The record gives the reactivity of an RNA of 177 nucleotides to 2A3.

[RMDB]
RNA sequence: GGGAACGACUCGAGUAGAGUCGAAAAUAAGGACGGCCACGGGGACGGAGGACGGGAAUAUGUGCCGAAGGAUGUCCAUGGUGGUUUCAGGAUGUCCUCCCGCAAUAAAGGGCGUCCUCUGUGUGGAUGCGGAAUUGGACUUCGGUCCAAUUCCGCAAAAAGAAACAACAACAACAAC
Reactivity to 2A3 in 0.01 (KOAc 150mM, MgCl2 10mM, bicine 150mM(pH8.5), 24C), signal-to-noise 1, nucleotides 027 to 126: u240a050a000g060g000a010c000g000g050c000c000a010c000g000g000g000g140a010c000g030g020a000g000g000a050c000g000g060g080a160a030u100a220u300g140u160g270c000c000g110a000a000g000g000a000u000g000u000c010c000a150u260g040g030u030g010g020u000u300u000c000a000g000g020a000u000g020u010c000c000u000c000c000c000g000c030a020a190u250a300a170a060g000g040g170c000g000u010c000c030u020c040u000g020u000g070u070g050g020a030
Source: RMDB library OK1LIB, as collected in RNAgym. Values cover nucleotides 27 to 126.